Chemical mapping of a 207-nucleotide RNA with 2A3. The RNA was probed in 150 mM KOAc, 10 mM MgCl2 and 150 mM bicine (pH 8.5) at 24 C. The data come from the RNA Mapping Database (RMDB), library OK3TST.

[RMDB]
RNA sequence: GGGAACGACUCGAGUAGAGUCGAAAACAUCAUAUUGCCUUUACUUGCGGGGAUAUUAUCUUGUGCGACCAAAUCACAAUAGAUCUCUUUAUCUAAUAACAAGGUGGGAUCUAUCACAUGCUCAGCUCGAGCACCAAAGUGCAGCUUGCACAAAUCACGUAAGUGAGCACUUCGGUGCUCACUUACGAAAAGAAACAACAACAACAAC
Reactivity to 2A3 in 0.01 (KOAc 150mM, MgCl2 10mM, bicine 150mM(pH8.5), 24C), signal-to-noise 1, nucleotides 027 to 156: c010a060u140c070a020u030a020u040u200g100c010c010u050u050u130a100c020u000u120g010c000g020g020g010g010a000u010a080u000u150a060u050c020u030u040g010u020g000c060g010a010c030c030a050a070a120u140c020a050c020a090a020u000a010g000a000u000c010u000c000u040u160u050a080u020c000u050a130a080u170a300a100c140a150a010g010g000u030g030g000g020a010u000c000u020a040u020c030a020c000a100u100g010c000u000c000a070g000c010u060c130g000a010g000c000a000c000c080a110a200a080g000u000g010c010a010g100c040u100u100g000c100a050c000a030a100a110u210c140a070